[RMDB]
RNA sequence: GGGAACGACUCGAGUAGAGUCGAAAAUCAGGAACCUUCGGGUUCCUGAAAAGAUCGCUGCAUCGCAAAGCGAGCGCGCGAGAGCGCGCGUACGCGAAGAAAAAAGAAUUGGGUUCGCCCAAUUCAACUGGAUAGGUAAGUUCGCUUACCUAUCCAGAAAAGAAACAACAACAACAAC
Reactivity to 2A3 in 0.01 (KOAc 150mM, MgCl2 10mM, bicine 150mM(pH8.5), 24C), signal-to-noise 1, nucleotides 027 to 126: u020c000a000g020g020a000a010c010c000u080u140c230g090g000g020u000u000c000c010u000g010a000a010a000a030g040a030u070c040g020c120u070g000c080a110u070c060g000c030a180a140a100g000c010g020a000g070c040g050c010g050c000g050a050g030a010g240c030g080c050g000c020g030u020a010c000g010c010g010a060a130g100a060a170a010a020a010a010g020a020a000u010u000g020g000g040u030u040c180g110c010c000c000a000a000u020u000c000a000a000
Reactivity to DMS in 0.01 (KOAc 150mM, MgCl2 10mM, bicine 150mM(pH8.5), 24C), signal-to-noise 2, nucleotides 027 to 126: u000c000a030g030g010a020a000c000c010u000u000c190g020g030g010u000u000c000c000u000g000a000a040a160a140g000a100u000c030g000c050u000g010c090a090u000c020g000c030a040a180a090g020c000g030a200g000c030g050c030g060c000g000a140g010a300g020c000g030c000g000c010g030u040a030c180g000c000g030a060a100g030a010a040a090a120a150a160g010a020a000u000u000g000g000g010u000u010c240g010c000c010c010a000a000u000u000c010a060a080
An RNA of 177 nucleotides, treated with 2A3 and DMS and read out base by base. For DMS the reverse transcriptase was MarathonRT. For DMS, 958 sequencing reads were counted. Reactivities are given for positions 27 through 126. For 2A3 the reverse transcriptase was SuperScript II with manganese.